Conditions: 150 mM KOAc, 10 mM MgCl2 and 150 mM bicine (pH 8.5), 24 C. Chemical mapping of a 207-nucleotide RNA with DMS and 2A3.
RNA sequence: GGGAACGACUCGAGUAGAGUCGAAAAUGAAGUUAGCCUUUUUGAUUAUCGGCAUUCUUGCGGCAGUUGUCUUGCUUGCGAUUGGUCUAUCGCCUGACGGAUGCUUUAACUGUUUUAACUGCUCACGAUAAAUUACCCGAGGAGGUCGGCCGCAUGGCGCCUUAGAUCCAUUCGUGGAUCUAAGGCGAAAAGAAACAACAACAACAAC
Reactivity to DMS in 0.01 (KOAc 150mM, MgCl2 10mM, bicine 150mM(pH8.5), 24C), signal-to-noise 2, nucleotides 027 to 156: u010g010a080a050g040u010u000a060g020c020c010u000u000u010u000u020g020a180u000u000a070u030c060g000g000c040a170u000u000c070u020u010g000c040g010g040c020a070g010u000u000g040u020c050u010u000g040c020u010u010g000c010g010a200u000u010g020g000u000c080u000a150u000c050g020c020c040u000g000a040c040g020g020a080u010g000c090u010u020u000a080a130c050u000g040u000u000u020u000a050a070c040u010g040c000u000c030a090c080g030a080u000a020a040a090u000u010a030c070c020c050g000a060g010g020a050g030g020u000c050g030g020c030c050g000c070a080u020g040g040
Reactivity to 2A3 in 0.01 (KOAc 150mM, MgCl2 10mM, bicine 150mM(pH8.5), 24C), signal-to-noise 3, nucleotides 027 to 156: u140g010a060a000g110u070u080a020g000c000c000u070u140u050u060u110g220a170u130u100a060u160c030g010g000c040a030u060u020c060u090u110g050c050g010g000c030a030g010u040u030g010u060c050u100u250g050c000u020u030g010c010g100a090u010u100g020g020u040c070u090a040u030c030g000c010c000u020g030a040c010g020g020a030u050g030c000u010u060u050a070a040c020u040g130u110u090u010u100a060a050c050u030g000c010u030c020a040c030g040a020u070a160a070a030u080u070a120c020c010c040g020a050g020g020a020g010g040u060c030g040g000c000c000g070c060a030u020g070g000
Annotation: The DMS profile rests on 3,446 reads. For DMS the reverse transcriptase was MarathonRT. The 2A3 profile rests on 1,107 reads. Reactivities are given for positions 27 through 156. It was measured as part of the RMDB library OK3TST.